[RMDB]
RNA sequence: GGGAACGACUCGAGUAGAGUCGAAAACUCACUCACUACGGUGAGUGAGAAUCUUAAGGCUCAAUAAAGCUUGCCUUGAGGUCCCUCAAGCAGAUAUAGACUGAAACAUUUAGUACACACAAGCAGGGAGCAACGGCUCGAGUACGCUCGAGCCGAACAUAAUUAGGAGCUUCGGCUCCUAAUUAUGAAAAGAAACAACAACAACAAC
Reactivity to 2A3 in 0.01 (KOAc 150mM, MgCl2 10mM, bicine 150mM(pH8.5), 24C), signal-to-noise 3, nucleotides 027 to 156: c000u000c000a010c000u000c000a010c000u010a020c270g100g000u000g010a000g010u000g000a000g000a000a020u010c010u000u000a000a010g030g000c000u010c110a110a250u180a280a180a060g090c130u080u080g000c000c000u010u010g000a000g000g010u000c000c020c000u060c070a060a070g030c030a000g080a090u090a060u130a150g120a050c060u080g060a050a170a010c040a030u120u090u130a050g010u120a030c060a010c020a010c020a100a000g050c020a050g060g040g050a050g020c030a080a090c010g000g010c000u000c000g010a000g000u030a060c230g020c060u000c000g000a000g000c000c000g000a000a000
Reactivity to DMS in 0.01 (KOAc 150mM, MgCl2 10mM, bicine 150mM(pH8.5), 24C), signal-to-noise 1, nucleotides 027 to 156: c030u010c000a010c010u010c000a010c000u010a120c300g090g010u000g010a020g040u000g020a010g010a030a010u000c050u000u000a100a100g040g030c020u060c070a060a140u010a140a110a190g000c060u000u000g000c030c010u010u000g010a020g130g020u010c040c000c010u000c080a110a100g000c000a100g000a110u000a030u000a090g010a110c010u000g010a110a030a040c060a090u010u000u000a100g030u000a090c060a090c000a070c000a080a110g030c090a060g000g030g000a080g000c010a080a120c060g030g030c000u030c010g010a050g000u000a060c290g000c020u000c000g030a020g060c020c010g000a010a050